[RMDB]
RNA sequence: GGGAACGACUCGAGUAGAGUCGAAAAGUACUAUGCCCGCCAUUAUUGAUGCAUGCUCCACCUCCCACUCCUUAAUAGUUGCAUUGAAGUUUCCUUUCGGUGGGUUCUGCAGCGUCUUUAUCAGAAAAAGUACGCAUAGUUUCGACUAUGCGUACUUAAAAGAAACAACAACAACAAC
Reactivity to DMS in 0.01 (KOAc 150mM, MgCl2 10mM, bicine 150mM(pH8.5), 24C), signal-to-noise 2, nucleotides 027 to 126: g000u000a110c080u010a070u010g010c010c000c030g010c090c080a060u000u010a050u000u000g020a050u000g010c070a040u010g010c030u000c040c010a050c040c020u000c020c000c010a100c080u020c030c020u010u010a060a060u000a080g010u010u000g010c080a100u010u000g000a050a140g010u000u000u000c020c010u010u010u000c050g000g000u010g010g010g000u010u010c060u000g020c060a090g010c020g010u010c030u000u000u000a060u000c070a080g000a080a080a070